[RMDB]
Source information
Chemical mapping of a 207-nucleotide RNA with 2A3. The 2A3 profile rests on 390 reads. For 2A3 the reverse transcriptase was SuperScript II with manganese. Conditions: 150 mM KOAc, 10 mM MgCl2 and 150 mM bicine (pH 8.5), 24 C.

RNA sequence: GGGAACGACUCGAGUAGAGUCGAAAAUUGUGUCAUUUGUAUUCCAACAGCAAGUGGCACUAACUUUCGGGCAGUUGGAAUACCUGGAAGUGACUCAGUGCUCGUAAUCUAAGUACUGAGUGAACUUGUCAACUAAGAUUACGAGUUGGCAAGUGUACCGCCUACUACUCUUCGGAGUAGUAGGCGGAAAAGAAACAACAACAACAAC
Reactivity to 2A3 in 0.01 (KOAc 150mM, MgCl2 10mM, bicine 150mM(pH8.5), 24C), signal-to-noise 1, nucleotides 027 to 156: u090u080g040u000g000u000c010a030u000u000u000g120u110a300u270u050c150c090a020a010c050a140g000c010a060a000g000u000g000g010c030a000c030u000a000a060c000u020u000u000c000g000g000g040c030a080g020u120u170g000g100a070a000u060a100c000c000u020g030g030a020a000g030u040g030a000c000u000c030a000g000u000g000c030u060c180g120u210a090a260u090c120u140a020a000g000u000a000c000u030g000a050g000u000g020a000a040c000u000u000g000u000c000a000a000c000u050a000a180g130a300u250u290a050c190g040a100g000u000u000g000g000c000a000a000g000u000g020u030a030
Reactivities are rounded to 0.1 and cut off at 0 and 3.